The record gives the reactivity of an RNA of 207 nucleotides to 2A3. Source: RMDB library RNAMAK, as collected in RNAgym.
RNA sequence: GGGAACGACUCGAGUAGAGUCGAAAAGGGGUCUCUAGAGGGUCGUAGUUGGGACGGGAGCUGAAGCCUCCACGGCUUUGAUCGUCCCAGGUUCGAAGACCUACCCACCUAGAGACGGAGGCACCCAAAGGAGACUCACGUUCGCGUGAGUCUCCAACAUAAAAUUAAGCUUCGGCUUAAUUUUAUGAAAAGAAACAACAACAACAAC
Reactivity to 2A3 in 0.01 (KOAc 150mM, MgCl2 10mM, bicine 150mM(pH8.5), 24C), signal-to-noise 1, nucleotides 027 to 156: g070g010g030g000u010c000u010c010u000a010g030a050g070g010g030u060c110g060u110a150g090u170u190g030g010g000a010c030g010g000g000a010g010c050u060g030a110a030g010c030c000u070c020c000a030c000g020g040c010u230u100u020g090a090u130c020g000u000c000c000c010a030g000g000u070u140c210g200a210a000g030a040c000c000u000a000c000c000c000a050c010c000u010a010g000a010g010a000c030g000g000a010g010g000c000a040c030c010c000a060a010a010g000g020a000g000a000c000u010c000a010c010g070u100u080c300g010c030g110u000g000a000g000u010c000u010c000c000a000a000
The 2A3 profile rests on 901 reads.